[RMDB]
RNA sequence: GGGAACGACUCGAGUAGAGUCGAAAAAGCGUUUAUUUGACUUACAUGAACUCAUUCUUAAACGCUAACAACCAAGCGGGUGGGAUUUUUCAAAACCACACCAGUCAAACUUAUGGGAAUGGGGUUACUUGUUGCAGAGAUUCGUCUCUGCAACAAGAAAAGAAACAACAACAACAAC
Reactivity to DMS in 0.01 (KOAc 150mM, MgCl2 10mM, bicine 150mM(pH8.5), 24C), signal-to-noise 1, nucleotides 027 to 126: a040g010c000g000u000u000u000a030u020u000u000g000a040c050u010u020a150c280a190u020g010a090a060c070u010c000a020u020u000c020u010u000a000a000a000c020g010c000u000a060a090c140a060a110c000c050a080a150g010c210g020g040g030u000g000g000g010a060u000u000u010u000u020c190a130a080a060a090c020c010a050c010a040c030c030a080g020u000c100a080a030a030c140u000u010a030u070g010g010g000a040a000u000g000g010g000g000u000u000a130
Reactivity to 2A3 in 0.01 (KOAc 150mM, MgCl2 10mM, bicine 150mM(pH8.5), 24C), signal-to-noise 1, nucleotides 027 to 126: a010g000c010g030u000u030u000a080u000u020u080g000a010c040u050u180a010c040a170u270g040a100a060c020u010c010a040u030u000c020u040u080a020a000a040c000g000c000u020a030a050c040a000a030c020c000a010a020g090c130g070g020g040u060g060g050g040a090u000u020u000u030u300c100a030a100a000a000c000c000a010c010a080c030c010a000g020u010c010a000a050a050c060u250u170a070u300g030g000g020a040a040u050g000g000g000g050u030u130a020
An RNA of 177 nucleotides, treated with DMS and 2A3 and read out base by base. The RNA was probed in 150 mM KOAc, 10 mM MgCl2 and 150 mM bicine (pH 8.5) at 24 C. The data come from the RNA Mapping Database (RMDB), library OK2TST. For 2A3 the reverse transcriptase was SuperScript II with manganese.